[RMDB]
Structure probing data (2A3) for a 207-nucleotide construct. For 2A3, 963 sequencing reads were counted. Source: RMDB library PDB130, as collected in RNAgym. 2A3 adducts were read by reverse transcription with SuperScript II with manganese. Conditions: 150 mM KOAc, 10 mM MgCl2 and 150 mM bicine (pH 8.5), 24 C.

RNA sequence: GGGAACGACUCGAGUAGAGUCGAAAACCAGUCCUACCAUAAUGGUAAGUGGAAACCGGCUACUGCUGGUAAUCUCUGGCUUGAAUUUCGUUAUGGCCUUAUGCCUCUCUUUUAUGACAUCAGAGAUGUCAUGUUAGACUGGCAGAACCGUCAUGAUCUACUCAGGACUGUUCGCAGUCCUGAGUAGAAAAGAAACAACAACAACAAC
Reactivity to 2A3 in 0.01 (KOAc 150mM, MgCl2 10mM, bicine 150mM(pH8.5), 24C), signal-to-noise 2, nucleotides 027 to 156: c050c000a030g080u100c010c000u010a000c000c000a120u160a300a140u300g010g010u070a090a080g020u050g010g040a130a050a070c020c030g020g020c030u160a110c090u300g000c000u030g010g050u040a020a040u020c030u000c010u080g060g030c020u060u090g060a140a070u080u060u130c020g000u050u080a020u040g000g000c000c010u070u120a040u000g000c000c000u000c000u020c000u000u000u010u060a010u020g000a000c000a000u020c040a040g080a040g000a300u000g020u020c000a000u000g000u030u010a000g000a060c020u010g000g000c010a010g010a020a000c000c010g030u030c000a020u040g030a030u000